[RMDB]
An RNA of 177 nucleotides, treated with DMS and 2A3 and read out base by base. Conditions: 150 mM KOAc, 10 mM MgCl2 and 150 mM bicine (pH 8.5), 24 C.
RNA sequence: GGGAACGACUCGAGUAGAGUCGAAAAACACUACGAUACGUCGUAGUGAUCGUCGAUGACGACCAGAAGUUAUCCCUGUCUGAAUGAUUGUGAGGAAAAAAGACUAUGGUAACACUCCGAGACUAAAUAACAUAACUAAUUUCGAUUAGUUAUGUUAAAAAGAAACAACAACAACAAC
Reactivity to DMS in 0.01 (KOAc 150mM, MgCl2 10mM, bicine 150mM(pH8.5), 24C), signal-to-noise 9, nucleotides 027 to 126: a110c020a020c010u000a000c000g010a030u000a100c190g030u000c010g020u000a000g010u000g010a090u000c060g010u000c030g020a150u020g010a070c090g010a050c050c030a080g010a110a080g010u010u000a080u000c010c010c030u010g000u000c030u000g010a090a070u020g000a100u000u010g010u010g010a120g020g010a010a050a070a090a100a080g000a040c030u010a100u010g000g000u010a040a050c080a100c090u010c030c030g010a090g010a100c090u020a040a070a130
Reactivity to 2A3 in 0.01 (KOAc 150mM, MgCl2 10mM, bicine 150mM(pH8.5), 24C), signal-to-noise 9, nucleotides 027 to 126: a000c010a000c000u000a000c000g000a010u020a040c240g110u000c000g000u010a000g000u000g010a070u030c020g030u000c050g160a160u250g020a040c020g020a020c000c010a030g050a180a010g060u040u060a060u070c010c020c000u010g030u000c020u060g190a210a170u120g070a180u180u120g100u110g130a220g050g030a090a070a020a010a010a010g030a010c020u030a030u100g020g000u030a050a020c020a010c060u030c030c030g040a040g030a060c050u130a030a050a130
Reactivities are given for positions 27 through 126. DMS adducts were read by reverse transcription with MarathonRT.